[RMDB]
RNA sequence: GGGAACGACUCGAGUAGAGUCGAAAAAGCAUGCCGUAGAAGGCCACUACGUAAAAAACCAAAACAAAACAAUUCCCGAACGCGAAAUCGCUCUCGCUGCUUAAUUAACGCAGCGACGUCCUACCCGGUUUGCCUGUAGGCUGGGAUAGGGCGUAAGCUGGUAUCACGGGUUCGCCCGUGAUACCAGAAAAGAAACAACAACAACAAC
Reactivity to 2A3 in 0.01 (KOAc 150mM, MgCl2 10mM, bicine 150mM(pH8.5), 24C), signal-to-noise 2, nucleotides 027 to 156: a010g090c090a120u070g000c020c030g000u020a000g000a300a300g100g000c010c000a030c010u020a000c030g060u080a000a050a000a000a000a050c040c060a070a060a080a010c100a020a130a030a060c030a120a130u070u000c000c000c000g090a080a010c050g050c050g080a030a100a240u150c060g020c010u000c000u000c000g030c000u010g000c000u120u090a120a150u170u080a290a000c060g000c000a010g000c000g010a000c000g000u010c000c000u000a000c020c000c010g010g090u030u020u110g010c010c030u070g020u010a060g030g000c050u000g000g010g080a100u000a000g000g000g000c000g000u000a000a000g030
Structure probing data (2A3) for a 207-nucleotide construct. 2A3 adducts were read by reverse transcription with SuperScript II with manganese. It was measured as part of the RMDB library RSTRND. For 2A3, 710 sequencing reads were counted. The reactions ran in a buffer of 150 mM KOAc, 10 mM MgCl2 and 150 mM bicine (pH 8.5), at 24 C.